[RMDB]
RNA sequence: GGGAACGACUCGAGUAGAGUCGAAAAAUACUUCUCAGGAUGGCGCGUUGCAGUCCAACAAGAUCUAGGGACUGUACAGAAUUUUCCUAUACCUCGAGUCGGGUUUGGAAUCUAAGGUUGACUCGCUAAAACUUUACGUGGUUCGCCACGUAAAGAAGCAAUGUUUCUAGUUCGCUAGAAACAUUGCAAAAGAAACAACAACAACAAC
Reactivity to DMS in 0.01 (KOAc 150mM, MgCl2 10mM, bicine 150mM(pH8.5), 24C), signal-to-noise 1, nucleotides 027 to 156: a150u010a090c130u010u010c020u000c020a230g040g030a080u000g010g000c060g020c170g010u000u000g020c000a030g050u000c010c050a080a250c080a170a180g020a080u000c150u010a130g030g010g030a040c010u020g000u000a040c080a150g000a140a090u000u000u010u010c000c010u000a070u000a110c030c000u000c020g010a040g030u000c050g000g040g000u000u000u000g000g020a080a080u000c060u000a060a130g010g020u000u000g030a030c020u000c020g040c100u000a090a060a070a120c010u010u000u000a010c000g000u030g010g060u000u000c300g030c010c000a020c010g000u000a010a000a010g050a080a120
Reactivity to 2A3 in 0.01 (KOAc 150mM, MgCl2 10mM, bicine 150mM(pH8.5), 24C), signal-to-noise 3, nucleotides 027 to 156: a000u100a030c030u040u030c030u010c030a030g050g020a130u090g050g030c030g020c060g100u060u050g000c020a000g000u000c010c010a050a090c070a110a140g080a200u110c080u200a100g060g000g000a000c010u010g030u040a010c010a010g110a130a060u010u050u040u020c010c010u060a080u080a080c020c030u030c040g010a020g010u010c010g000g000g000u040u060u020g030g000a040a030u000c040u090a070a090g070g070u070u140g050a020c000u010c030g000c050u100a100a120a050a070c000u000u000u000a000c000g000u000g000g020u030u070c150g010c050c010a000c010g010u000a000a000a000g000a010a000
Structure probing data (DMS and 2A3) for a 207-nucleotide construct.
The data come from the RNA Mapping Database (RMDB), library M2RFPK.
Conditions: 150 mM KOAc, 10 mM MgCl2 and 150 mM bicine (pH 8.5), 24 C.
Reactivities are given for positions 27 through 156.
For DMS, 2,081 sequencing reads were counted.